[RMDB]
RNA sequence: GGGAACGACUCGAGUAGAGUCGAAAACGGUGCACAAUCAUAACUCCCUUCUUCUUCAACGUCCCAGGCUCAAGUGAUCCCCUUACCUCAGCCUCCCUAGUAGCUGGAAUCACUGGCAUGCACCACAUCUGCUCACAACAUUCGUGUUGUGAGCAGAAAAAGAAACAACAACAACAAC
Reactivity to DMS in 0.01 (KOAc 150mM, MgCl2 10mM, bicine 150mM(pH8.5), 24C), signal-to-noise 1, nucleotides 027 to 126: c140g010g010u000g010c010a020c170a120a070u000c030a060u000a130a160c130u000c030c010c010u000u000c060u010u000c000u000u000c100a070a130c110g010u030c020c020c070a100g030g000c030u000c030a080a090g030u000g010a070u020c050c030c030c100u000u000a060c070c070u000c100a090g040c030c020u000c020c000c050u010a030g010u000a070g030c050u000g010g020a090a040u020c110a050c070u000g010g030c100a110u010g000c030a090c020c030a050c140a130
Structure probing data (DMS) for a 177-nucleotide construct.
Conditions: 150 mM KOAc, 10 mM MgCl2 and 150 mM bicine (pH 8.5), 24 C.